[RMDB]
RNA sequence: GGGAACGACUCGAGUAGAGUCGAAAACGCUGGGUCAAGGCUGCGAUGUUUGUCAGCUGAAGCGCGCACGGCUUGGAUUUAACAUACCGCAGCUUGACCUGUGCUGAAGCGCGCACGGCAACCGAAAGGUGCGAUGUACGAAAGUUCGCUUUCGUAAUCUCCAUAUUGGCUUCGGCCAAUAUGGAGAAAAAGAAACAACAACAACAAC
Reactivity to 2A3 in 0.01 (KOAc 150mM, MgCl2 10mM, bicine 150mM(pH8.5), 24C), signal-to-noise 2, nucleotides 027 to 156: c020g050c010u040g000g000g000u010c000a020a000g300g160c020u010g000c000g100a180u080g090u100u160u250g120u110c000a000g020c000u040g020a100a030g000c000g020c010g020c090a010c020g000g050c060u130u220g250g030a140u260u300u250a210a090c150a210u260a160c110c010g000c010a000g000c000u000u000g000a000c000c000u000g000u020g000c000u030g040a170a020g010c050g040c000g060c000a000c020g020g000c000a020a010c010c000g060a090a010a010g000g000u020g000c030g010a060u130g070u130a010c040g000a070a010a000g020u090u070c270g070c140u000u000u000c000g000u000a030a160
The data come from the RNA Mapping Database (RMDB), library RNAMAK. Chemical mapping of a 207-nucleotide RNA with 2A3. The reactions ran in a buffer of 150 mM KOAc, 10 mM MgCl2 and 150 mM bicine (pH 8.5), at 24 C.